RNA sequence: GGGAACGACUCGAGUAGAGUCGAAAAGUGGGUUACGUGCUACGUGAAACACCACCCUGAUGUGGUGGUUCCGCCGCCGAGACCGGGCGCCGCUGCGCGCCACCAGCUCAUUAUCCCUGCGGUGGCGGAUCGAGAAGACUUUCGAGUCUUCUCGAUCAAAAGAAACAACAACAACAAC
Reactivity to DMS in 0.01 (KOAc 150mM, MgCl2 10mM, bicine 150mM(pH8.5), 24C), signal-to-noise 3, nucleotides 027 to 126: g020u000g010g010g010u000u000a060c060g020u010g020c110u010a050c040g010u000g010a080a070a080c080a030c000c010a020c000c060c110u010g000a140u020g020u010g020g000u000g010g000u000u000c000c010g020c030c020g020c000c010g010a240g000a080c090c150g010g010g010c010g020c020c060g030c190u000g010c170g030c010g010c010c000a040c080c080a070g010c040u000c040a060u010u000a160u000c030c010c000u000g010c030g000g030u000g000g000c020g010
Reactivity to 2A3 in 0.01 (KOAc 150mM, MgCl2 10mM, bicine 150mM(pH8.5), 24C), signal-to-noise 2, nucleotides 027 to 126: g050u060g040g040g020u070u090a010c040g000u110g250c030u050a040c030g090u110g130a050a080a010c030a020c020c000a000c000c000c030u180g120a220u160g070u130g020g000u010g020g000u070u000c020c010g000c010c000g020c010c020g020a030g000a060c030c000g030g030g010c040g020c010c040g260c180u180g010c080g000c010g010c080c020a020c030c010a010g050c050u020c040a050u030u200a050u160c000c030c020u040g000c030g010g020u000g000g000c010g000
Source information: Structure probing data (DMS and 2A3) for a 177-nucleotide construct. The reactions ran in a buffer of 150 mM KOAc, 10 mM MgCl2 and 150 mM bicine (pH 8.5), at 24 C. In probing experiments dimethyl sulfate is read out at A N1 and C N3, which are open when not base-paired. Source: RMDB library OK2TST, as collected in RNAgym. 2A3 adducts were read by reverse transcription with SuperScript II with manganese.